[RMDB]
RNA sequence: GGGAACGACUCGAGUAGAGUCGAAAAAUGAUGUAAAAGAAUCAACACUAGCAAACAUACCAAAGAAAUCUUAUGGUAAACCAGAAGAUGUAGCCAAUGCCGUAGCAUUUUUAGUUAGUGACAUGUCAUAAUUAUGCCAGUUCGCUGGCAUAAUUAUAAAAGAAACAACAACAACAAC
Reactivity to DMS in 0.01 (KOAc 150mM, MgCl2 10mM, bicine 150mM(pH8.5), 24C), signal-to-noise 5, nucleotides 027 to 126: a110u030g010a020u020g000u030a050a060a130a130g000a130a070u000c070a050a100c020a030c020u010a010g010c010a100a080a060c180a120u010a110c100c070a030a050a070g010a130a100a050u000c010u000u000a100u020g000g010u050a020a100a140c030c030a020g000a020a020g000a020u000g010u020a090g010c070c060a030a040u000g000c010c210g050u000a130g000c040a020u000u020u000u020u030a070g020u010u000a040g000u000g000a110c100a040u010g000u020c160
Reactivity to 2A3 in 0.01 (KOAc 150mM, MgCl2 10mM, bicine 150mM(pH8.5), 24C), signal-to-noise 5, nucleotides 027 to 126: a000u120g030a020u090g030u240a040a010a030a110g100a030a080u060c020a000a100c000a000c040u030a020g010c030a020a090a120c020a050u120a080c010c030a070a040a020g120a020a180a020u080c020u040u110a130u060g020g000u050a060a070a130c040c000a020g020a030a010g000a020u040g030u080a030g040c040c030a060a080u100g020c050c060g080u040a020g020c050a060u000u010u040u050u070a030g000u000u010a010g000u000g020a060c080a140u120g060u150c010
Background
Source: RMDB library OK1LIB, as collected in RNAgym. The record gives the reactivity of an RNA of 177 nucleotides to DMS and 2A3. The RNA was probed in 150 mM KOAc, 10 mM MgCl2 and 150 mM bicine (pH 8.5) at 24 C. For DMS the reverse transcriptase was MarathonRT. The 2A3 profile rests on 2,934 reads.